[RMDB]
RNA sequence: GGGAACGACUCGAGUAGAGUCGAAAAGGGAGAACAGUAGCAAUUAACAAGCUGCUAGGGAAACAGGGAAACCGUGCUGAUCCGAACAUCAGAGCCGACCUCCUGUGGUCUGGUUCCCUAGCACCCAGGCUCAGGCUUCGGCUUGGGGUGGCCGGAAGAUUUAAUGACUCUUCGGAGUCAUUAAAUCAAAAGAAACAACAACAACAAC
Reactivity to DMS in 0.01 (KOAc 150mM, MgCl2 10mM, bicine 150mM(pH8.5), 24C), signal-to-noise 2, nucleotides 027 to 156: g050g010g000a090g030a090a170c060a050g000u010a050g010c020a080a190u000u000a130a180c130a130a160g000c080u000g000c010u000a090g000g000g010a100a080a050c060a140g000g010g020a150a100a090c080c050g000u010g020c000u000g000a070u000c020c000g030a070a060c010a030u010c000a130g010a170g010c020c040g010a070c020c020u000c080c010u000g060u010g060g010u000c000u000g030g000u000u000c040c040c030u000a040g000c040a100c110c010c030a060g020g000c010u000c020a050g030g000c300u000u000c020g010g000c020u000u000g000g040g030g040u000g020g000c030c030g000g010a080a210
Reactivity to 2A3 in 0.01 (KOAc 150mM, MgCl2 10mM, bicine 150mM(pH8.5), 24C), signal-to-noise 4, nucleotides 027 to 156: g040g020g000a090g020a120a040c040a070g010u080a020g050c050a070a110u180u160a200a160c100a120a070g030c030u030g000c000u010a000g020g000g000a060a150a050c100a060g010g000g060a080a050a020c050c020g050u110g050c030u090g050a060u050c060c050g040a070a030c040a080u100c030a030g010a000g120c020c010g020a020c010c010u040c010c020u110g040u090g090g010u000c020u030g000g030u070u090c050c010c000u020a030g030c060a020c020c000c010a010g010g000c010u000c030a010g030g000c010u050u040c030g040g010c010u010u040g040g040g000g000u010g010g000c020c020g020g000a050a040